[RMDB]
An RNA of 177 nucleotides, treated with DMS and 2A3 and read out base by base. DMS adducts were read by reverse transcription with MarathonRT. The reactions ran in a buffer of 150 mM KOAc, 10 mM MgCl2 and 150 mM bicine (pH 8.5), at 24 C. For DMS, 5,226 sequencing reads were counted. Values cover nucleotides 27 to 126.
RNA sequence: GGGAACGACUCGAGUAGAGUCGAAAAAGGUGCUGCGCCUGGCGCAGCUCAUCAUUGAGUACCUGCUGCACUGCCAGGAUUGCCUGAGUGCCAGUGUUGCCCAGCUGGAGGCACGGCUGCAGACCAGCCUAGACAGACGAUUCGUCGUCUGUCUAGGAAAAGAAACAACAACAACAAC
Reactivity to DMS in 0.01 (KOAc 150mM, MgCl2 10mM, bicine 150mM(pH8.5), 24C), signal-to-noise 5, nucleotides 027 to 126: a090g020g020u000g020c020u000g010c010g020c020c060u000g010g010c030g010c010a020g000c010u000c050a040u000c150a130u000u010g010a130g010u010a070c120c070u000g000c020u000g010c030a140c180u000g010c050c010a040g010g000a160u000u000g020c000c020u000g000a080g020u020g010c020c020a050g010u000g010u000u000g010c020c000c010a300g010c030u000g010g000a120g000g020c040a090c130g000g000c030u000g020c050a050g000a110c050c030a140g010
Reactivity to 2A3 in 0.01 (KOAc 150mM, MgCl2 10mM, bicine 150mM(pH8.5), 24C), signal-to-noise 3, nucleotides 027 to 126: a000g110g030u120g050c000u000g000c040g050c040c130u070g050g000c040g000c010a010g000c010u010c000a040u020c000a040u040u300g080a030g070u080a100c020c060u060g000c020u020g010c030a060c140u100g020c030c010a040g050g060a190u110u230g040c010c000u100g070a080g070u120g060c000c020a010g010u020g040u050u240g040c010c020c000a000g030c010u030g030g030a050g090g010c060a020c080g000g000c010u060g000c020a010g010a070c030c010a000g000